About this RNA: Structure probing data (DMS and 2A3) for a 207-nucleotide construct. The RNA was probed in 150 mM KOAc, 10 mM MgCl2 and 150 mM bicine (pH 8.5) at 24 C. Values cover nucleotides 27 to 156. Source: RMDB library OK3TST, as collected in RNAgym.

RNA sequence: GGGAACGACUCGAGUAGAGUCGAAAAUUCAGCGACAAUGUAUGAAGCUUCUGGAAGGAAAGGCCAGCAUACAAGACUUUAUCUUUGCCAAGGAAUACAGAGGAAGUUUUUCUUAUAAACCAGGAGCUUGUGUGCCAGCCCUUGAACUUACAAGGUACUCUGAGAAUAUGUUCGCAUAUUCUCAGAGAAAAGAAACAACAACAACAAC
Reactivity to DMS in 0.01 (KOAc 150mM, MgCl2 10mM, bicine 150mM(pH8.5), 24C), signal-to-noise 1, nucleotides 027 to 156: u010u010c000a120g080c030g010a040c010a060a180u000g030u000a060u030g010a000a070g000c030u010u000c010u010g000g010a140a080g000g010a000a080a110g000g000c030c030a100g000c190a140u000a070c120a050a080g030a100c050u030u010u010a070u020c030u000u010u000g000c120c060a060a130g020g000a120a080u000a080c050a070g020a080g050g000a080a050g030u010u000u010u000u000c080u010u010a180u000a040a080a220c030c010a120g000g000a070g000c080u000u020g000u030g020u010g000c000c060a170g000c070c010c000u030u000g010a010a090c050u000u000a060c030a040a050g000g000u000a190
Reactivity to 2A3 in 0.01 (KOAc 150mM, MgCl2 10mM, bicine 150mM(pH8.5), 24C), signal-to-noise 3, nucleotides 027 to 156: u090u020c020a020g030c020g060a040c050a070a090u140g010u060a100u110g110a060a010g020c000u020u010c010u030g010g060a080a060g010g010a050a020a020g020g000c020c010a010g020c010a020u070a090c070a020a030g060a090c020u090u130u120a100u120c060u070u120u130g040c020c010a050a020g040g010a070a030u090a080c060a050g080a080g050g020a050a030g030u010u000u050u080u060c030u020u210a190u090a190a120a050c020c010a010g040g000a020g040c020u020u020g020u000g000u000g000c020c030a040g020c070c020c010u010u030g020a080a050c030u050u100a030c060a080a010g050g020u090a030